RNA sequence: GGGAACGACUCGAGUAGAGUCGAAAAGAUAUGGACCAGAACUACGGUACAAAGUGGCGUUGAAAUCGGAAACGAUGGAGCCACAAAAAGCCGCUGGUCCUAAGUCAAAGCCGAGUUCGCUCGGCAACAAUGAUGACACGUUCGCGUGUCAUCAUUGAAAAGAAACAACAACAACAAC
Reactivity to DMS in 0.01 (KOAc 150mM, MgCl2 10mM, bicine 150mM(pH8.5), 24C), signal-to-noise 3, nucleotides 027 to 126: g000a080u010a300u010g000g030a000c010c010a010g000a090a060c120u010a300c020g000g010u000a070c160a090a160a180g020u010g010g000c000g000u000u020g000a100a100a020u010c000g030g010a020a060a180c000g010a010u010g000g010a120g010c000c000a000c010a000a040a080a170a070g000c000c000g000c020u000g000g000u000c010c010u000a000a050g000u000c050a090a070a120g000c000c000g000a010g010u000u030c250g000c010u000c000g010g030c010a030a040
Reactivity to 2A3 in 0.01 (KOAc 150mM, MgCl2 10mM, bicine 150mM(pH8.5), 24C), signal-to-noise 3, nucleotides 027 to 126: g020a000u050a010u140g010g010a000c020c020a010g020a100a060c180u300a050c270g000g040u100a090c180a040a220a030g010u010g000g000c040g220u300u150g060a110a130a000u020c010g000g030a040a040a030c000g000a010u020g000g050a000g000c000c010a000c000a040a020a000a000a000g000c000c000g000c000u010g000g000u010c000c000u020a050a010g010u010c050a110a080a030g000c000c010g000a000g010u080u210c300g020c140u000c010g020g000c000a000a000
Record summary:
Structure probing data (DMS and 2A3) for a 177-nucleotide construct. The data come from the RNA Mapping Database (RMDB), library TTRDEL. For DMS the reverse transcriptase was MarathonRT. In probing experiments dimethyl sulfate is read out at A N1 and C N3, which are open when not base-paired. For 2A3 the reverse transcriptase was SuperScript II with manganese.